Chemical mapping of a 177-nucleotide RNA with DMS and 2A3. The RNA was probed in 150 mM KOAc, 10 mM MgCl2 and 150 mM bicine (pH 8.5) at 24 C. The DMS profile rests on 6,631 reads.
RNA sequence: GGGAACGACUCGAGUAGAGUCGAAAACAGUCAAAGUGAAGGCGGGCCAGACCAUCGCCGCAUUCUACCAGAGCACCGUCAUGAUCUUUGGCACGAUGGCUCGCUACAUGCCGAGAGUUAGGGAAAAAUAAAUACGCAUGUUCGCAUGCGUAUUUAUAAAAGAAACAACAACAACAAC
Reactivity to DMS in 0.01 (KOAc 150mM, MgCl2 10mM, bicine 150mM(pH8.5), 24C), signal-to-noise 6, nucleotides 027 to 126: c120a150g020u010c040a030a060a050g020u010g010a180a100g000g000c020g000g000g000c040c030a140g000a110c100c070a060u000c070g020c040c030g020c080a040u000u010c080u010a090c100c070a110g000a090g020c040a080c020c030g020u000c040a090u000g000a090u000c010u000u000u000g010g000c000a090c120g000a110u000g000g010c020u010c040g020c030u010a060c140a080u010g010c050c030g000a110g000a130g010u000u000a070g010g010g010a000a050a060a100
Reactivity to 2A3 in 0.01 (KOAc 150mM, MgCl2 10mM, bicine 150mM(pH8.5), 24C), signal-to-noise 3, nucleotides 027 to 126: c020a020g080u040c040a040a010a010g010u050g080a080a010g020g000c010g020g020g000c010c020a040g000a070c040c020a070u050c040g080c090c020g000c000a030u110u040c020u060a090c030c050a030g010a010g070c040a110c140c020g050u030c050a300u070g030a050u030c020u030u050u050g010g000c010a000c030g060a050u120g020g000c010u030c030g010c020u070a050c030a050u130g080c030c010g050a050g000a000g040u080u100a090g000g030g010a030a150a020a000